Chemical mapping of a 207-nucleotide RNA with 2A3. Conditions: 150 mM KOAc, 10 mM MgCl2 and 150 mM bicine (pH 8.5), 24 C. The 2A3 profile rests on 1,096 reads.
RNA sequence: GGGAACGACUCGAGUAGAGUCGAAAAGAAAGAAAGAACCCUUCCCGCGGGGCUGGAUCUUCCAGAUGGUGCGGGCCGGGACAAGCCGGAGAGUGUCCCGGUUUCAGAAACAACGUUCGGCAGCCAAACUAGACUACCCACUUCGGUGGGUAGUCAAGAUGAUUAAUUGCUUCGGCAAUUAAUCAUCAAAAGAAACAACAACAACAAC
Reactivity to 2A3 in 0.01 (KOAc 150mM, MgCl2 10mM, bicine 150mM(pH8.5), 24C), signal-to-noise 2, nucleotides 027 to 156: g020a010a010a000g030a040a070a000g050a190a220c050c000c000u000u000c000c000c000g000c000g000g000g000g000c000u000g000g000a130u190c070u140u020c140c000a010g000a000u020g030g220u050g020c020g000g000g000c000c000g000g000g010a010c010a030a010g020c000c000g030g000a020g000a010g050u050g010u000c000c000c000g000g000u010u060u020c020a010g060a000a060a010c050a030a010c080g040u030u020c010g040g020c010a030g040c080c040a090a090a110c070u130a070g000a000c000u000a010c000c010c000a000c000u040u010c120g070g000u000g010g020g000u000a000g000u000c000a000a000